[RMDB]
RNA sequence: GGGAACGACUCGAGUAGAGUCGAAAAUUGCCUUAGACAAAGGAUGCUCUUGGAGUCCCACCACACCUAAAACCACGCUUUGAAGGAUCUGCCAAGCUCACUUUUAAUCAUGAGAAAGAAAUUACCCCUAUCUGGGCGUGUUCGCACGCCCAGAUAGAAAAGAAACAACAACAACAAC
Reactivity to 2A3 in 0.01 (KOAc 150mM, MgCl2 10mM, bicine 150mM(pH8.5), 24C), signal-to-noise 2, nucleotides 027 to 126: u060u070g080c010c000u070u060a060g040a060c020a000a110a000g120g010a090u060g040c000u000c000u100u090g060g000a020g030u070c000c000c000a000c000c010a010c000a000c000c030u070a040a100a010a010c070c040a000c090g020c070u000u080u110g050a090a030g000g000a040u000c010u060g080c000c000a060a000g000c030u000c010a020c010u000u000u060u140a060a110u050c020a050u060g050a020g120a060a110a030g110a000a070a000u050u020a020c000c000c000

Overview
This 177-nucleotide RNA was probed chemically with 2A3. For 2A3, 715 sequencing reads were counted. The RNA was probed in 150 mM KOAc, 10 mM MgCl2 and 150 mM bicine (pH 8.5) at 24 C. As a SHAPE reagent, 2A3 marks flexible, mostly unpaired nucleotides at the ribose 2'-OH.